RNA sequence: GGGAACGACUCGAGUAGAGUCGAAAACUCCCCGGAGUCCCGAGUGAGGCUUAUCCCGGGGAAUCCGGCCAAGUCCCGAAAUGUCUAGUCCCGUGGUCUCACUUCCAAAAGGAGGAGCGGGGGGACUGUAUACUUCUGUUCGCAGAAGUAAAAAGAAACAACAACAACAAC
Reactivity to 2A3 in 0.01 (KOAc 150mM, MgCl2 10mM, bicine 150mM(pH8.5), 24C), signal-to-noise 9, nucleotides 027 to 129: c030u030c000c000c010c000g000g060a060g070u060c020c010c010g020a050g070u220g020a050g040g020c050u100u120a110u160c010c000c020g000g000g000g010a010a040u040c040c020g030g030c050c040a090a030g040u020c010c000c000g040a070a050a050u210g040u050c050u070a030g090u040c000c010c010g060u060g040g060u020c010u010c020a160c030u070u020c030c010a110a130a050a080g050g010a010g010g010a030g050c020g010g010g000g000g000g000a000c000u000g010u020a080
Reactivity to DMS in 0.01 (KOAc 150mM, MgCl2 10mM, bicine 150mM(pH8.5), 24C), signal-to-noise 9, nucleotides 027 to 129: c110u020c060c110c000c000g000g010a040g010u020c010c010c000g020a120g050u050g010a060g020g000c030u020u030a100u040c050c000c000g000g010g010g010a010a010u020c050c030g050g000c100c110a080a130g030u010c020c020c010g020a070a090a070u070g010u030c050u040a030g000u030c010c010c020g010u000g010g010u000c010u000c020a150c010u000u000c040c060a080a080a120a200g010g000a010g000g000a150g030c010g010g020g000g020g020g010a000c000u000g000u010a130
The record gives the reactivity of an RNA of 170 nucleotides to 2A3 and DMS. For 2A3, 44,061 sequencing reads were counted. DMS adducts were read by reverse transcription with MarathonRT. The reactions ran in a buffer of 150 mM KOAc, 10 mM MgCl2 and 150 mM bicine (pH 8.5), at 24 C. Values cover nucleotides 27 to 129. As a SHAPE reagent, 2A3 marks flexible, mostly unpaired nucleotides at the ribose 2'-OH. The DMS profile rests on 83,927 reads.